About this RNA
Conditions: 150 mM KOAc, 10 mM MgCl2 and 150 mM bicine (pH 8.5), 24 C. Structure probing data (DMS and 2A3) for a 207-nucleotide construct. It was measured as part of the RMDB library OK3TST. For 2A3 the reverse transcriptase was SuperScript II with manganese. For DMS, 1,211 sequencing reads were counted.

[RMDB]
RNA sequence: GGGAACGACUCGAGUAGAGUCGAAAAACUAUGUUCUGGGCAAUGUAUUAUCUUCUGCGGCACCCAGAAGCUAUGGCAGCAGUGCGUGACGAAAUUGACCGUUUGCUGCAGUCAACAGGUCAAAAGAAAGGGUCUGGAUUUCCCAUCCACCUCACCACUGAGGGGUAAAUUUCGAUUUACCCCUCAGAAAAGAAACAACAACAACAAC
Reactivity to DMS in 0.01 (KOAc 150mM, MgCl2 10mM, bicine 150mM(pH8.5), 24C), signal-to-noise 1, nucleotides 027 to 156: a060c050u010a000u000g000u000u000c000u000g040g010g040c030a070a300u010g030u010a080u010u000a120u010c140u000u000c100u000g030c070g040g000c220a040c030c040c010a070g000a100a040g020c090u010a130u010g050g010c000a120g020c050a050g040u010g010c030g020u010g000a190c030g010a120a110a070u000u000g000a040c020c030g000u000u000u040g010c050u000g000c000a160g000u000c030a000a030c000a060g010g020u020c000a030a030a020a130g000a140a150a140g000g040g030u000c050u000g040g000a050u000u000u010c030c090c010a300u000c040c010a070c000c020u020c040a040c100c020a120
Reactivity to 2A3 in 0.01 (KOAc 150mM, MgCl2 10mM, bicine 150mM(pH8.5), 24C), signal-to-noise 1, nucleotides 027 to 156: a000c030u060a060u150g070u020u040c040u000g000g000g000c060a070a140u060g070u040a110u220u040a130u220c060u140u100c080u120g020c000g080g020c020a020c000c000c000a000g000a000a000g000c010u040a070u090g000g070c020a020g000c010a020g050u060g000c040g000u040g000a040c000g090a010a050a260u090u040g010a050c030c020g000u020u020u080g010c040u070g000c020a000g090u060c000a030a040c090a120g000g060u100c020a060a000a000a070g110a000a070a000g020g050g000u060c120u090g000g000a030u090u000u000c000c020c000a030u010c040c000a000c030c010u020c010a060c000c210a030